[RMDB]
RNA sequence: GGGAACGACUCGAGUAGAGUCGAAAAAUGGUGACUGGAAAAUUGCUAAGAGAGUAGAUGUUAAGUGUCCUCACCACACCAAAAAACAAAAAGUAUGUGAGUUAAUGCAUGUUAAUUAACUUGAUUUAGCCAUUCCACAAUGUAUUCAUACUUUAAAUAAUACCGGUGACUUCGGUCACCGGUAUUAAAAAGAAACAACAACAACAAC
Reactivity to 2A3 in 0.01 (KOAc 150mM, MgCl2 10mM, bicine 150mM(pH8.5), 24C), signal-to-noise 1, nucleotides 027 to 156: a000u120g100g000u110g020a200c180u080g000g030a120a020a160a210u110u140g000c030u060a110a000g120a110g020a030g060u110a090g000a090u060g000u130u080a000a000g030u000g000u150c000c020u060c030a080c000c050a000c000a000c030c050a000a130a060a000a000a100c120a030a080a050a000a000g030u060a050u150g030u020g050a060g050u000u090a000a000u090g060c020a020u030g030u230u150a050a150u020u070a000a000c000u000u030g060a140u230u070u030a050g000c000c000a080u040u000c080c000a090c000a100a080u060g090u060a270u000u200c000a000u000a200c000u020u050u050a160a130a000